[RMDB]
About this RNA:
This 177-nucleotide RNA was probed chemically with DMS and 2A3. Reactivities are given for positions 27 through 126. The reactions ran in a buffer of 150 mM KOAc, 10 mM MgCl2 and 150 mM bicine (pH 8.5), at 24 C.
RNA sequence: GGGAACGACUCGAGUAGAGUCGAAAAUAUAAAAUGAUCGAUGGCUGUAGCCAAACCUUGCUCCUCAUAGACAUAAAGAAGUAACAUUUUGGUUAGCCAAAGCUUUUACGUCCUUUGAGCCUAUGAAUCUAUCUGGUGAUUUCGAUCACCAGAUAGAAAAAGAAACAACAACAACAAC
Reactivity to DMS in 0.01 (KOAc 150mM, MgCl2 10mM, bicine 150mM(pH8.5), 24C), signal-to-noise 3, nucleotides 027 to 126: u020a130u010a050a090a120a080u010g000a050u000c060g020a170u000g010g020c020u010g050u000a080g010c030c020a030a060a070c150c150u000u000g020c060u010c020c060u000c030a020u000a040g010a060c090a060u000a020a060a030g010a090a110g000u000a010a030c220a130u000u000u000u000g020g010u020u000a100g030c000c040a010a090a080g020c150u000u010u000u000a040c050g000u000c070c000u000u000u000g000a040g020c020c020u000a020u000g000a030a100
Reactivity to 2A3 in 0.01 (KOAc 150mM, MgCl2 10mM, bicine 150mM(pH8.5), 24C), signal-to-noise 2, nucleotides 027 to 126: u190a000u030a000a100a030a160u100g020a060u060c040g020a040u040g030g000c020u080g050u200a020g010c000c000a010a040a070c010c020u000u080g030c020u020c020c000u040c020a070u010a050g100a030c040a070u190a120a090a000g040a050a020g030u010a030a040c040a070u030u000u040u070g010g010u050u040a040g000c010c000a030a000a000g000c010u030u000u020u080a020c010g050u020c010c000u030u080u070g100a040g000c010c010u080a070u190g090a050a070